The record gives the reactivity of an RNA of 170 nucleotides to 2A3 and DMS.
For DMS the reverse transcriptase was MarathonRT.
For 2A3, 6,196 sequencing reads were counted.
The RNA was probed in 150 mM KOAc, 10 mM MgCl2 and 150 mM bicine (pH 8.5) at 24 C.
The DMS profile rests on 33,816 reads.
[RMDB]
RNA sequence: GGGAACGACUCGAGUAGAGUCGAAAAACUAUGGCCUUCGUUAUGUUGUUGGUUAAACACAAACACACCUUUUUGACACUUUUCUUGUUGCCUGUGGCUAUUUGUUUGACUUAUGCAAACAUAGUCUAUCACGAGGGAUUCGUCCCUCGUAAAAGAAACAACAACAACAAC
Reactivity to 2A3 in 0.01 (KOAc 150mM, MgCl2 10mM, bicine 150mM(pH8.5), 24C), signal-to-noise 5, nucleotides 027 to 129: a000c050u040a100u200g110g000c000c000u100u080c060g060u070u120a090u230g040u030u010g020u020u040g050g060u060u070a060a070a010c060a020c040a070a060a000c070a000c000a030c060c020u020u040u040u070u000g060a010c020a040c020u020u030u100u030c030u030u070g020u000u040g030c000c020u060g000u070g020g000c000u010a020u050u100u110g000u000u000u000g040a060c030u140u150a100u300g080c030a000a000a000c030a020u010a030g030u010c040u040a080u110c060
Reactivity to DMS in 0.01 (KOAc 150mM, MgCl2 10mM, bicine 150mM(pH8.5), 24C), signal-to-noise 6, nucleotides 027 to 129: a150c090u040a090u000g040g020c000c050u040u030c070g030u020u050a110u040g060u000u000g030u020u030g000g040u020u010a040a030a040c140a100c150a060a060a080c070a000c150a140c000c030u010u010u030u070u010g000a110c100a080c040u000u000u000u000c050u000u000g010u030u000g020c060c030u020g040u000g040g000c060u000a020u040u020u070g020u080u040u000g000a090c130u020u020a120u000g010c040a010a010a010c000a010u030a030g010u030c000u040a050u020c130